[RMDB]
RNA sequence: GGGAACGACUCGAGUAGAGUCGAAAAUACUGGGUUCUUACCUGCCGCUGCCUCCAUGCUCAUAGGUCUCAUUGGAGUUAUGAGGCCAUUCACGCGGUUGCCUCUACCGGUGGCGCCAUCGUCACCCCGGAAAGGACAGGUUCGCCUGUCCUUUCCGAAAAGAAACAACAACAACAAC
Reactivity to 2A3 in 0.01 (KOAc 150mM, MgCl2 10mM, bicine 150mM(pH8.5), 24C), signal-to-noise 1, nucleotides 027 to 126: u080a030c060u060g000g030g000u110u080c000u100u150a150c030c020u000g010c010c030g030c080u060g070c000c040u030c000c000a040u070g000c000u000c040a060u050a150g040g000u000c040u030c050a060u060u090g130g050a090g130u070u050a090u060g010a010g000g030c000c000a070u130u080c060a030c090g010c000g000g080u050u110g020c010c000u010c010u100a150c050c000g000g020u030g000g040c020g050c050c080a190u300c000g020u030c010a040c020c000c040
Reactivity to DMS in 0.01 (KOAc 150mM, MgCl2 10mM, bicine 150mM(pH8.5), 24C), signal-to-noise 1, nucleotides 027 to 126: u000a140c060u010g000g000g010u000u000c100u020u000a130c000c030u000g010c000c020g020c060u000g000c040c020u000c030c050a110u040g000c020u000c130a100u050a060g040g010u000c040u010c000a050u000u010g010g010a130g010u000u030a080u000g010a040g000g000c020c070a060u010u010c110a070c140g000c080g030g020u000u000g000c000c050u020c030u000a130c090c080g000g000u000g040g000c010g000c080c060a110u000c030g020u000c050a080c000c010c100

This 177-nucleotide RNA was probed chemically with 2A3 and DMS. The 2A3 profile rests on 1,149 reads. Values cover nucleotides 27 to 126. Source: RMDB library OK2TST, as collected in RNAgym.